Chemical mapping of a 177-nucleotide RNA with DMS and 2A3.
Source: RMDB library TTRDEL, as collected in RNAgym.
DMS adducts were read by reverse transcription with MarathonRT.
Conditions: 150 mM KOAc, 10 mM MgCl2 and 150 mM bicine (pH 8.5), 24 C.
The DMS profile rests on 2,366 reads.
2A3 adducts were read by reverse transcription with SuperScript II with manganese.
[RMDB]
RNA sequence: GGGAACGACUCGAGUAGAGUCGAAAAGAUAUGGACAAGGGAGCUACGUUAGCGUUGAAAUCGGAAACGAUGGAGCUAACCUCUAGCGAAGAACUUGUCCUAAGUCAAAGUUGGGUUCGCCCAACAAGUGUAAAUCUAGCUUCGGCUAGAUUUACACAAAAGAAACAACAACAACAAC
Reactivity to DMS in 0.01 (KOAc 150mM, MgCl2 10mM, bicine 150mM(pH8.5), 24C), signal-to-noise 3, nucleotides 027 to 126: g010a030u010a300u000g010g020a020c000a000a000g020g000g030a160g010c000u000a000c170g020u000u000a010g000c000g000u000u010g000a050a080a030u000c000g010g000a110a090a170c010g010a010u000g000g000a080g010c000u000a000a010c000c010u010c020u000a010g000c000g010a090a120g000a090a120c000u000u000g000u010c000c000u010a020a090g010u010c010a070a070a160g000u000u000g010g000g020u000u000c300g020c000c000c000a000a000c010a030a070
Reactivity to 2A3 in 0.01 (KOAc 150mM, MgCl2 10mM, bicine 150mM(pH8.5), 24C), signal-to-noise 1, nucleotides 027 to 126: g020a010u060a020u080g010g010a000c000a010a000g030g050g040a050g000c010u030a040c300g080u030u010a000g030c030g190u270u070g040a040a030a000u020c030g010g000a040a030a030c000g000a010u020g030g000a010g000c000u000a000a010c010c010u040c010u000a000g000c000g070a140a060g010a030a020c000u000u000g000u000c000c010u030a120a020g010u000c050a120a020a100g020u000u010g010g040g000u070u110c200g140c020c000c010a010a000c020a020a040